[RMDB]
RNA sequence: GGGAACGACUCGAGUAGAGUCGAAAAAUAAAUGCUGACGUCAACGUGGUCACCCAGGCCAGAAACAGGCCAACAACCGUGACCGGCUGCAAGAAAGGGAAGAAUUUUUCUUUUGCAGGUACAAAAACGUCCUAUAUGGAUUCGUCCAUAUAGGACGAAAAGAAACAACAACAACAAC
Reactivity to 2A3 in 0.01 (KOAc 150mM, MgCl2 10mM, bicine 150mM(pH8.5), 24C), signal-to-noise 2, nucleotides 027 to 126: a000u080a000a050a040u110g000c050u030g040a050c040g010u060c050a080a030c080g100u080g020g000u020c010a000c010c010c050a040g000g030c020c000a050g140a050a180a050c140a020g020g000c010c000a040a040c030a030a010c040c050g000u000g010a010c000c000g050g010c010u010g000c010a010a040g080a170a040a010g020g020g030a050a030g090a060a130u050u050u000u000u040c000u000u090u000u040g010c020a030g060g000u120a040c040a010a100a010a030a040
Reactivity to DMS in 0.01 (KOAc 150mM, MgCl2 10mM, bicine 150mM(pH8.5), 24C), signal-to-noise 2, nucleotides 027 to 126: a070u000a060a060a050u010g010c040u010g000a060c120g020u020c080a050a110c100g000u010g010g000u010c030a040c010c050c050a160g040g010c020c000a060g000a090a060a110c200a130g000g020c020c020a070a100c110a050a040c030c090g030u000g010a040c010c010g000g000c010u000g000c020a020a050g020a050a030a030g000g010g000a020a050g020a060a060u010u010u000u000u000c000u000u000u000u000g000c000a010g000g020u010a040c120a100a060a050a060a140

The data come from the RNA Mapping Database (RMDB), library M2PK90.
Chemical mapping of a 177-nucleotide RNA with 2A3 and DMS.
2A3 adducts were read by reverse transcription with SuperScript II with manganese.
Reactivities are rounded to 0.1 and cut off at 0 and 3.